[RMDB]
RNA sequence: GGGAACGACUCGAGUAGAGUCGAAAAACAAAAUGGGUUCGUUAACACCAAAGAAUGUUGGAACAACAGAUGCACGUCCAAUGGCUUUGUUACGUUUUGAUUUUGUUAACCACAUGAACAUGAAUGGAACGACAAGUGUUGCACCUGUACCACCCAAUCCUAUGCAGUGAUUCGUCACUGCAUAGGAAAAAGAAACAACAACAACAAC
Reactivity to DMS in 0.01 (KOAc 150mM, MgCl2 10mM, bicine 150mM(pH8.5), 24C), signal-to-noise 3, nucleotides 027 to 156: a150c090a030a050a080a080u010g040g010g010u000u000c070g030u000u000a080a090c030a100c080c040a040a100a150g010a080a080u000g020u000u010g020g000a080a080c040a120a160c060a100g000a120u000g060c040a070c030g010u020c040c060a070a140u010g020g020c050u000u000u010g040u000u000a080c070g020u010u010u000u010g000a080u000u000u010u000g020u010u010a030a130c090c070a060c090a160u000g020a040a080c050a040u020g020a040a090u000g020g000a050a060c040g000a070c060a030a070g010u000g000u000u000g010c020a030c060c020u000g000u000a050c030c020a140c010c000c010a040a300
Reactivity to 2A3 in 0.01 (KOAc 150mM, MgCl2 10mM, bicine 150mM(pH8.5), 24C), signal-to-noise 3, nucleotides 027 to 156: a010c060a030a040a000a030u110g010g050g000u080u090c030g080u080u130a050a010c060a030c020c030a060a030a040g060a100a130u120g020u030u010g060g030a050a060c020a060a000c020a070g120a030u130g020c060a040c100g040u000c050c050a000a040u110g060g010c050u040u030u040g040u090u100a040c040g020u030u030u070u050g100a080u010u050u070u040g010u040u050a050a050c040c000a020c030a130u120g050a020a020c020a060u050g060a130a050u090g040g000a020a050c010g080a010c050a080a050g040u020g000u080u010g020c020a020c000c010u020g050u030a010c000c000a010c020c050c000a030a040